[RMDB]
RNA sequence: GGGAACGACUCGAGUAGAGUCGAAAAUCGCGAUAGACCAUGGUACGAUCAGAGUACCUGCUACAUGGAUCUCCAUGGAGACGCAGACGAUCAUCAUGUACAUGCUCACUGCUGAUCCACAGUCUAGGCUGAGGAUCGGUUUCGACCGAUCCUCAGCAAAAGAAACAACAACAACAAC
Reactivity to 2A3 in 0.01 (KOAc 150mM, MgCl2 10mM, bicine 150mM(pH8.5), 24C), signal-to-noise 1, nucleotides 027 to 126: u100c020g000c080g170a090u050a010g080a090c110c000a100u090g080g000u070a060c070g010a050u020c040a030g080a040g090u020a060c000c020u040g000c010u000a050c000a040u050g030g010a070u010c030u000c080c000a040u040g040g050a020g010a010c050g000c020a010g090a070c080g020a030u000c010a020u020c040a020u170g010u120a020c010a050u050g050c030u070c060a050c040u070g000c010u020g040a020u000c060c020a020c020a010g020u020c020u110a100g030
Reactivity to DMS in 0.01 (KOAc 150mM, MgCl2 10mM, bicine 150mM(pH8.5), 24C), signal-to-noise 1, nucleotides 027 to 126: u020c040g000c140g010a100u000a050g000a080c120c010a070u010g000g000u000a010c110g030a110u010c100a020g000a100g010u010a030c110c060u000g020c080u000a050c040a020u000g010g000a080u000c120u000c020c050a150u000g000g020a070g030a230c240g000c070a040g000a110c060g000a030u000c010a030u000c080a070u000g010u000a080c170a030u000g000c120u000c110a140c010u000g030c000u000g010a110u000c030c050a010c210a060g030u000c010u000a070g000